[RMDB]
RNA sequence: GGGAACGACUCGAGUAGAGUCGAAAAUUGGCAAAAUUGCUCACUCAGCGCAUUUGUGAUGGAAGCUUAGGAGAUGGCGAUGCUGGAAAGUGCUAUAUAAAGGAAACUUUUCAUGGCCUGCAGAUGACGGACAUAACCUAUUCGUAGGUUAUGUCCGAAAAGAAACAACAACAACAAC
Reactivity to 2A3 in 0.01 (KOAc 150mM, MgCl2 10mM, bicine 150mM(pH8.5), 24C), signal-to-noise 2, nucleotides 027 to 126: u020u000g000g030c010a000a000a070a300u170u120g040c030u010c030a100c010u070c030a050g000c010g000c110a050u040u120u130g090u060g050a060u060g000g060a100a020g000c020u040u060a050g040g070a130g030a080u030g000g030c020g040a020u090g020c030u020g010g020a060a040a010g040u040g000c000u070a040u040a030u100a260a080a000g030g000a100a090a030c010u070u020u010u000c040a030u100g080g000c030c010u010g000c010a040g050a170u100g040a030
Reactivity to DMS in 0.01 (KOAc 150mM, MgCl2 10mM, bicine 150mM(pH8.5), 24C), signal-to-noise 3, nucleotides 027 to 126: u000u010g030g030c030a090a060a060a140u010u000g010c020u020c070a100c040u010c090a090g030c130g020c060a050u000u000u010g020u000g000a040u000g010g020a100a090g010c060u010u000a080g010g020a060g010a030u000g010g020c030g000a090u000g020c090u000g030g010a020a030a060g010u000g020c020u000a090u000a130u020a090a050a070g000g000a070a070a070c030u000u000u010u000c090a060u000g020g020c020c030u000g010c090a030g020a100u010g010a220